[RMDB]
RNA sequence: GGGAACGACUCGAGUAGAGUCGAAAACGCUGGGUGGUUGAGCAGAUGUGGGAGCUUCUGAAGCGCGCACGGAAGCGAAGAACACAUUCUGUGUAAGCCACCUGUGCUGAAGCGCGCACGGCAACCGAAAGGUGCGAAAGGGCUCGUUCGCGAGCCCACAUUCGUAUCACUUCGGUGAUACGAAUGUAAAAGAAACAACAACAACAAC
Reactivity to DMS in 0.01 (KOAc 150mM, MgCl2 10mM, bicine 150mM(pH8.5), 24C), signal-to-noise 1, nucleotides 027 to 156: c030g000c010u010g030g010g030u000g020g030u010u000g010a300g000c010a050g000a050u030g030u010g020g000g000a220g030c000u000u000c030u030g030a040a060g030c030g030c030g010c040a300c020g000g030a050a030g020c010g020a090a170g040a090a260c020a000c010a040u000u000c030u020g000u000g000u000a120a110g030c000c010a030c000c030u000g020u000g010c060u000g010a070a030g000c000g080c030g020c000a300c040g010g000c050a100a090c000c050g030a180a090a170g010g050u000g050c010g000a080a080a190g000g020g010c030u010c000g050u020u000c160g010c030g000a030g050c000c000c010
Reactivity to 2A3 in 0.01 (KOAc 150mM, MgCl2 10mM, bicine 150mM(pH8.5), 24C), signal-to-noise 2, nucleotides 027 to 156: c020g020c010u020g000g000g000u010g000g010u080u020g070a200g120c000a000g000a010u000g000u000g010g000g000a000g000c000u000u000c000u000g060a170a020g010c010g010c010g000c000a010c010g010g000a010a000g010c020g080a280a010g010a010a010c010a010c020a050u300u120c020u020g010u010g040u050a000a000g000c000c000a000c000c000u000g000u000g000c000u020g010a110a030g000c000g000c000g010c010a010c000g010g040c010a000a000c000c000g050a070a050a020g000g020u010g010c000g050a090a010a020g000g000g000c010u010c000g030u110u140c290g020c020g090a000g020c000c000c000
Description: This 207-nucleotide RNA was probed chemically with DMS and 2A3. Source: RMDB library RNAMAK, as collected in RNAgym. The 2A3 profile rests on 4,281 reads.